Source: RMDB library OK3TST, as collected in RNAgym. This 207-nucleotide RNA was probed chemically with DMS and 2A3.
[RMDB]
RNA sequence: GGGAACGACUCGAGUAGAGUCGAAAAGGCAACAAUUUCGGUGUUGGAAGAUCUGCUUCGAUUCCGACCGUUGACCGAACUCACAGAUGAUCCUGAGGAGUGGGUACACCACGGUAGCGAUAUGUGGCCGCAUGGUGAUAACGGUGUGUGGCAGAGCCCAAAAGGAGCUGUUCGCAGCUCCUUUUGGAAAAGAAACAACAACAACAAC
Reactivity to DMS in 0.01 (KOAc 150mM, MgCl2 10mM, bicine 150mM(pH8.5), 24C), signal-to-noise 2, nucleotides 027 to 156: g020g020c070a000a070c050a060a090u000u010u010c070g020g010u000g040u000u000g000g000a060a150g040a050u010c020u000g020c080u000u000c020g000a300u000u000c030c020g050a100c040c060g040u000u000g010a090c000c010g030a040a060c020u000c020a010c020a050g000a160u000g030a140u000c030c040u000g000a220g000g000a100g090u000g050g030g020u000a300c070a050c000c010a040c030g020g010u000a110g030c060g000a210u010a080u020g050u010g020g040c040c000g070c020a070u000g020g100u000g010a210u000a050a040c040g010g010u000g020u010g030u000g010g030c000a000g000a150g030c180
Reactivity to 2A3 in 0.01 (KOAc 150mM, MgCl2 10mM, bicine 150mM(pH8.5), 24C), signal-to-noise 2, nucleotides 027 to 156: g150g020c090a080a030c050a060a170u100u280u260c120g080g060u030g000u000u110g020g030a030a030g090a180u000c020u050g030c010u050u070c070g090a200u160u080c030c040g050a010c020c000g020u020u030g000a020c000c000g020a060a030c000u020c000a010c000a000g140a100u250g010a040u140c010c000u080g050a150g110g000a020g060u050g030g000g000u070a030c020a000c000c000a010c010g000g000u060a040g060c100g050a140u100a160u300g020u060g070g000c000c000g080c080a160u080g060g000u030g030a110u120a070a000c000g000g000u040g010u010g000u030g070g000c030a000g020a050g050c020
Annotation
The reactions ran in a buffer of 150 mM KOAc, 10 mM MgCl2 and 150 mM bicine (pH 8.5), at 24 C. High 2A3 reactivity points to a flexible backbone, as in loops and unpaired stretches. For DMS the reverse transcriptase was MarathonRT.